[RMDB]
RNA sequence: GGGAACGACUCGAGUAGAGUCGAAAAGAUAUGGAGUGCUUAUUUGUAAUGAAUCUCCCGAUAAGUCGUAUAUCGGAAACGAUAUCGACUUUUGACGGGACUCAUUACAAAUAAGCACUCCUAAGUCCAUUAGUAUUUUCUUCGGAAAAUACUAAUGAAAAGAAACAACAACAACAAC
Reactivity to DMS in 0.01 (KOAc 150mM, MgCl2 10mM, bicine 150mM(pH8.5), 24C), signal-to-noise 5, nucleotides 027 to 126: g000a110u010a300u010g000g000a020g020u000g010c000u000u010a010u000u000u000g010u000a010a010u000g000a020a040u000c110u010c010c010c010g010a270u000a010a010g010u000c000g010u030a020u000a010u000c000g010g010a110a110a180c000g020a000u010a000u000c010g000a020c000u000u000u000u010g010a300c300g000g010g000a030c090u000c010a000u000u000a000c000a000a010a000u000a000a010g000c000a000c000u000c000c000u000a000a060g010u000c040
Structure probing data (DMS) for a 177-nucleotide construct. Reactivities are rounded to 0.1 and cut off at 0 and 3.